The record gives the reactivity of an RNA of 207 nucleotides to 2A3. The data come from the RNA Mapping Database (RMDB), library M2RFPK.
[RMDB]
RNA sequence: GGGAACGACUCGAGUAGAGUCGAAAACUGAUCCGGUUUUAACGCUGUUUUAUUGGCGCAAAGGUUUACGGAUAAACAACUAAUAAUUAAACCUUUUGUGUGCGAAACGUGGUUGUUUAACGUACUCACUGCCCCCAGGGAUUCGUCCCUGGGGGAAUGUCACUGUUAACUUCGGUUAACAGUGACAAAAAGAAACAACAACAACAAC
Reactivity to 2A3 in 0.01 (KOAc 150mM, MgCl2 10mM, bicine 150mM(pH8.5), 24C), signal-to-noise 1, nucleotides 027 to 156: c020u040g060a030u030c000c000g000g000u010u020u020u100a060a050c030g000c030u050g210u200u090u090u190a190u090u300g020g000c000g000c030a010a000a000g000g000u040u030u030a000c000g000g010a030u090a060a180a000c030a010a010c100u180a040a240u160a120a020u180u090a000a030a000c000c000u030u160u000u160g140u030g000u070g080c100g040a130a070a020c010g010u030g080g000u080u010g020u000u030u050a070a020c020g020u020a020c010u010c070a020c010u050g000c000c000c000c000c000a000g000g010g000a010u030u030c080g050u000c050c010c010u000g000g000g000g010g010a000a000

About this RNA
The reactions ran in a buffer of 150 mM KOAc, 10 mM MgCl2 and 150 mM bicine (pH 8.5), at 24 C. For 2A3 the reverse transcriptase was SuperScript II with manganese.